[RMDB]
RNA sequence: GGGAACGACUCGAGUAGAGUCGAAAAUCAUGGUGGUUCGCCACCAUGAACUGACUAGUCGCUAGAAAACGAUCAAAACUAGCGACUAGACUAACGAUCGAACUGGGGGACAGUUCGCUGUCCCCAAGCCAAUGAGUGAUUUCGAUCACUCAUUGGCAAAAGAAACAACAACAACAAC
Reactivity to 2A3 in 0.01 (KOAc 150mM, MgCl2 10mM, bicine 150mM(pH8.5), 24C), signal-to-noise 1, nucleotides 027 to 126: u010c000a000u000g000g020u030g050g000u020u050c180g030c030c000a020c010c000a000u020g000a000a040c030u010g020a010c000u000a000g010u000c010g000c000u020a010g000a090a170a040a050c120g120a140u230c170a050a050a030a150c000u000a000g020c000g010a000c000u010a000g000a000c000u040a030a030c050g100a090u200c080g060a070a060c110u150g070g000g000g010g010a000c010a000g030u050u020c120g000c060u000g000u000c000c000c010c000a000a010
Reactivity to DMS in 0.01 (KOAc 150mM, MgCl2 10mM, bicine 150mM(pH8.5), 24C), signal-to-noise 2, nucleotides 027 to 126: u000c000a010u000g010g020u010g000g000u000u020c220g000c020c000a000c010c000a020u000g000a040a170c210u000g010a150c000u020a030g000u000c000g020c000u000a000g030a020a060a180a100c120g040a170u020c130a120a030a120a060c000u000a000g000c000g010a000c000u000a000g000a140c050u000a040a100c240g000a110u010c080g010a090a100c130u020g010g010g010g040g010a040c000a010g000u000u010c170g040c030u000g010u000c000c000c010c050a030a000
The data come from the RNA Mapping Database (RMDB), library M2PK50. The record gives the reactivity of an RNA of 177 nucleotides to 2A3 and DMS. The RNA was probed in 150 mM KOAc, 10 mM MgCl2 and 150 mM bicine (pH 8.5) at 24 C.